[RMDB]
RNA sequence: GGGAACGACUCGAGUAGAGUCGAAAAGAUAUGGAUCCGGGUUGGGAGACUGCGGUCGGAAACGACCGGCAGUCGAAGAACAAUUGGAUCCUAAGUCAAAACUGAACACUGUUCGCAGUGUUCAGAAGUACUAAGUAUGCUUCGGCAUACUUAGUACAAAAGAAACAACAACAACAAC
Reactivity to 2A3 in 0.01 (KOAc 150mM, MgCl2 10mM, bicine 150mM(pH8.5), 24C), signal-to-noise 3, nucleotides 027 to 126: g010a010u030a000u060g000g010a000u000c020c030g170g030g030u050u030g050g000g020a220g000a020c010u010g000c010g000g010u010c010g010g020a030a010a000c000g000a000c020c000g070g100c020a000g010u000c000g000a020a010g020a010a010c010a000a080u080u130g000g000a000u000c000c000u000a020a010g010u000c010a020a020a170a230c000u000g000a010a000c000a000c000u020g060u120u110c300g040c150a000g000u000g000u010u000c000a000g000a020a010
Reactivity to DMS in 0.01 (KOAc 150mM, MgCl2 10mM, bicine 150mM(pH8.5), 24C), signal-to-noise 4, nucleotides 027 to 126: g000a020u000a130u000g000g000a010u000c000c010g010g010g030u000u000g010g000g000a170g010a010c010u000g020c000g010g000u000c000g010g000a030a050a070c010g010a000c000c000g020g050c010a000g030u000c000g010a120a170g000a160a230c010a000a060u010u000g020g000a010u000c000c000u000a000a090g000u000c010a100a080a130a240c000u010g000a010a000c000a010c000u000g010u000u020c260g010c010a010g010u000g000u000u000c010a010g000a030a100